An RNA of 207 nucleotides, treated with 2A3 and read out base by base. Reactivities are given for positions 27 through 156.
[RMDB]
RNA sequence: GGGAACGACUCGAGUAGAGUCGAAAACGGGGCAACUCUUCUCAGAAUCCAGCAAGAGGCGUGGAGAGAGGGCCGCGGUGCUCUGGAGUAGAGGCUCUGCCUUCGAAACACCAUCGACCGUCCCUUCUUCUUUACCUUCUUCUGGCUCUUCUUGGAGCUCGUCUCCUUAGUUCGCUAAGGAGACGAGAAAAGAAACAACAACAACAAC
Reactivity to 2A3 in 0.01 (KOAc 150mM, MgCl2 10mM, bicine 150mM(pH8.5), 24C), signal-to-noise 1, nucleotides 027 to 156: c060g000g000g020g000c020a060a070c020u040c000u150u050c100u030c010a000g060a030a030u300c010c010a080g030c120a020a020g020a010g010g010c200g060u030g020g010a020g000a010g000a000g020g000g000c020c000g000c060g000g050u000g000c010u010c000u000g010g000a000g000u000a010g020a000g020g010c020u000c180u300g020c020c000u220u120c000g010a010a010a040c010a010c160c000a000u030c000g100a300c050c010g000u020c000c000c000u070u100c020u100u000c000u000u020u000a000c020c010u000u000c000u010u020c000u000g010g000c010u020c000u010u010c000u030u060g020g000a020g020

The 2A3 profile rests on 810 reads. It was measured as part of the RMDB library VIROID.